[RMDB]
RNA sequence: GGGAACGACUCGAGUAGAGUCGAAAAGAUAUGGAAAUGAAGUGGCGAAGAACAUGCCGUCGGAAACGACGGUCAUGGGAGCCACCAUUUCCUAAGUCAAAUCGUCGAAUCUUCGGAUUCGACGAAACGCGAACGUUAAGUUCGCUUAACGUUCGCGAAAAGAAACAACAACAACAAC
Reactivity to 2A3 in 0.01 (KOAc 150mM, MgCl2 10mM, bicine 150mM(pH8.5), 24C), signal-to-noise 3, nucleotides 027 to 126: g010a010u020a010u040g010g030a020a030a000u070g060a300a250g040u020g020g000c000g180a300a190g050a300a000c000a020u010g000c000c000g000u000c000g000g000a010a000a000c000g000a000c010g000g090u180c010a000u000g010g040g040a050g000c000c010a010c000c010a000u000u000u000c010c000u010a010a010g000u020c010a040a040a210u040c000g010u000c000g000a000a010u010c000u030u090c280g200g020a020u010u010c010g000a000c000g000a020a000a000
Reactivity to DMS in 0.01 (KOAc 150mM, MgCl2 10mM, bicine 150mM(pH8.5), 24C), signal-to-noise 2, nucleotides 027 to 126: g000a000u000a040u020g000g000a010a010a000u010g000a230a200g080u000g000g020c000g010a120a150g010a110a130c000a010u000g010c010c000g000u000c000g000g010a000a000a010c000g020a010c010g000g010u020c020a000u000g000g000g000a090g000c000c000a010c010c000a000u000u000u010c000c000u000a010a110g010u000c000a070a130a150u000c000g000u000c000g000a010a000u000c000u000u010c240g050g000a010u000u000c000g010a000c010g000a000a050a100
An RNA of 177 nucleotides, treated with 2A3 and DMS and read out base by base. The reactions ran in a buffer of 150 mM KOAc, 10 mM MgCl2 and 150 mM bicine (pH 8.5), at 24 C. The DMS profile rests on 2,832 reads. DMS adducts were read by reverse transcription with MarathonRT. For 2A3, 6,747 sequencing reads were counted. 2A3 adducts were read by reverse transcription with SuperScript II with manganese.